[RMDB]
The data come from the RNA Mapping Database (RMDB), library OK2TST. Chemical mapping of a 177-nucleotide RNA with 2A3 and DMS. For 2A3 the reverse transcriptase was SuperScript II with manganese. DMS adducts were read by reverse transcription with MarathonRT. The RNA was probed in 150 mM KOAc, 10 mM MgCl2 and 150 mM bicine (pH 8.5) at 24 C.
RNA sequence: GGGAACGACUCGAGUAGAGUCGAAAAGUGCUAGCUUGCAGUGAGCAAGGCUCUGUGGACAUGGGACCAGCCAAGCCUGGCAUGGGAGAGAAUCUUCUUGUCUGCCAGUUGCUAAGACCUUGGUAAACUUUCUUCACAUUUUCGAAUGUGAAGAAAGAAAAGAAACAACAACAACAAC
Reactivity to 2A3 in 0.01 (KOAc 150mM, MgCl2 10mM, bicine 150mM(pH8.5), 24C), signal-to-noise 5, nucleotides 027 to 126: g060u040g020c020u030a050g000c010u000u040g000c020a080g040u060g150a070g010c040a040a030g050g000c010u000c040u050g100u070g040g030a020c020a080u070g020g000g080a040c000c010a010g010c010c030a040a010g010c000c010u010g000g000c010a050u060g010g030g000a040g000a010g040a090a140u040c030u160u020c000u070u130g210u130c010u010g020c010c000a050g010u100u100g000c010u010a050a030g030a050c010c020u050u050g050g000u140a080a060a040
Reactivity to DMS in 0.01 (KOAc 150mM, MgCl2 10mM, bicine 150mM(pH8.5), 24C), signal-to-noise 8, nucleotides 027 to 126: g020u000g020c040u000a090g010c040u000u000g010c050a120g020u010g000a100g010c040a060a070g010g010c040u000c040u000g010u010g020g010a090c090a070u000g010g010g000a130c030c050a110g000c020c030a060a060g020c090c020u000g000g000c010a040u010g010g010g000a040g000a070g010a110a110u010c140u010u000c060u000u000g000u000c060u000g010c010c020a020g010u010u000g020c030u010a060a070g000a070c080c030u000u000g010g010u000a080a070a180